An RNA of 177 nucleotides, treated with DMS and 2A3 and read out base by base. For DMS the reverse transcriptase was MarathonRT. The RNA was probed in 150 mM KOAc, 10 mM MgCl2 and 150 mM bicine (pH 8.5) at 24 C. 2A3 adducts were read by reverse transcription with SuperScript II with manganese. The 2A3 profile rests on 1,450 reads.
[RMDB]
RNA sequence: GGGAACGACUCGAGUAGAGUCGAAAACAGAGGCGCUCGCACGGGAUAGGAGUAAGACCAUAGCGAUAGGGAGAGAUGCUAGGAGUUAGAGGAGACCGAAGCGAGGAGGAAAGCAAAGAAAGCAACGGAACUUAGCAUAGUUCGCUAUGCUAAGUUCAAAAGAAACAACAACAACAAC
Reactivity to DMS in 0.01 (KOAc 150mM, MgCl2 10mM, bicine 150mM(pH8.5), 24C), signal-to-noise 1, nucleotides 027 to 126: c120a080g000a140g000g070c060g000c050u000c090g040c080a160c090g000g000g010a080u010a070g010g030a100g000u010a020a170g020a090c060c000a090u000a100g000c090g040a080u010a090g020g010g000a120g000a030g000a170u020g000c110u010a090g020g000a110g040u000u010a060g010a070g030g000a060g000a070c090c020g000a090a140g010c090g010a020g010g000a040g010g010a040a030a050g000c140a060a040a090g000a000a100a110g000c050a050a070c140g040
Reactivity to 2A3 in 0.01 (KOAc 150mM, MgCl2 10mM, bicine 150mM(pH8.5), 24C), signal-to-noise 1, nucleotides 027 to 126: c010a020g040a050g080g030c070g090c030u020c070g130c060a050c020g070g000g010a060u070a090g070g000a080g020u070a040a060g040a030c000c010a070u060a020g000c030g060a040u100a120g040g030g000a030g000a000g000a030u070g020c010u020a020g040g010a030g030u050u040a040g020a050g120g000a030g020a030c000c010g010a080a010g010c050g010a020g030g000a000g010g000a170a000a010g000c030a140a000a000g060a050a080a010g040c050a040a020c050g100